[RMDB]
RNA sequence: GGGAACGACUCGAGUAGAGUCGAAAAGAUAUGGACGAUCGGUAGGCUUGGAUUUACGGUCGGAAACGACCGUUGUCAGCCUUACCGAAUCGUCCUAAGUCAAAAGACCUAGUGUUCGCACUAGGUCGACAAACUGAACCUUCGGGUUCAGUUUGUCAAAAGAAACAACAACAACAAC
Reactivity to 2A3 in 0.01 (KOAc 150mM, MgCl2 10mM, bicine 150mM(pH8.5), 24C), signal-to-noise 3, nucleotides 027 to 126: g020a020u070a080u140g030g010a000c000g000a000u010c010g030g020u010a010g000g030c060u100u300g300g010a120u300u300u300a010c020g000g040u020c010g020g020a040a070a030c020g000a010c000c000g010u010u000g010u000c010a000g000c000c000u010u050a010c010c000g000a000a000u000c000g000u000c000c010u000a000a000g000u000c020a010a050a210a120g000a000c010c010u000a000g010u020g010u060u140c300g010c130a000c000u010a000g090g000u000c000
Reactivity to DMS in 0.01 (KOAc 150mM, MgCl2 10mM, bicine 150mM(pH8.5), 24C), signal-to-noise 3, nucleotides 027 to 126: g010a060u020a300u000g000g000a000c000g010a010u000c000g000g020u000a030g000g010c010u000u020g010g000a030u010u010u000a000c000g020g010u000c000g020g000a040a110a260c020g020a010c010c010g010u010u000g010u000c000a010g010c010c000u000u010a010c000c010g000a040a030u000c000g000u000c010c000u000a010a090g020u010c060a110a100a170a260g000a010c000c000u000a010g010u000g010u010u010c300g030c010a010c000u010a000g000g010u000c000

Conditions: 150 mM KOAc, 10 mM MgCl2 and 150 mM bicine (pH 8.5), 24 C. This 177-nucleotide RNA was probed chemically with 2A3 and DMS. 2A3 adducts were read by reverse transcription with SuperScript II with manganese. Reactivities are rounded to 0.1 and cut off at 0 and 3.